[RMDB]
RNA sequence: GGGAACGACUCGAGUAGAGUCGAAAACUACAAUGGGUUCCAGGGUGAGCGCGCAUCGAUAACGAUAAUCGCCAAGGAUAUGCUUGUGUAAACCGCCGAUUCACGCCGUUGAAACGAUGAAAACCUCCAACCGAAUCAGAUUCGUCUGAUUCGGUUGAAAAGAAACAACAACAACAAC
Reactivity to DMS in 0.01 (KOAc 150mM, MgCl2 10mM, bicine 150mM(pH8.5), 24C), signal-to-noise 3, nucleotides 027 to 126: c060u000a050c090a100a100u010g010g030g010u010u000c040c040a110g000g000g000u000g000a090g000c090g000c130g030c080a010u000c030g000a110u010a060a100c070g010a080u000a060a080u000c060g030c030c020a050a090g000g000a130u010a070u010g010c050u000u000g010u000g020u000a020a080a110c100c030g000c100c020g000a090u000u000c030a060c070g010c060c060g000u000u000g000a070a080a060c090g000a080u000g000a100a050a110a130c070c040u000c080
Reactivity to 2A3 in 0.01 (KOAc 150mM, MgCl2 10mM, bicine 150mM(pH8.5), 24C), signal-to-noise 2, nucleotides 027 to 126: c010u100a040c060a040a140u170g120g000g000u090u020c030c010a040g010g010g040u080g000a070g010c070g010c020g000c050a000u020c040g100a110u040a220a070c050g000a010u040a110a050u070c030g000c040c000a040a020g040g010a080u080a030u260g080c030u100u070g070u000g030u110a030a060a040c040c000g030c000c020g010a030u040u080c020a020c100g010c030c010g010u040u030g040a080a040a000c020g030a030u070g100a070a100a010a040c000c000u020c030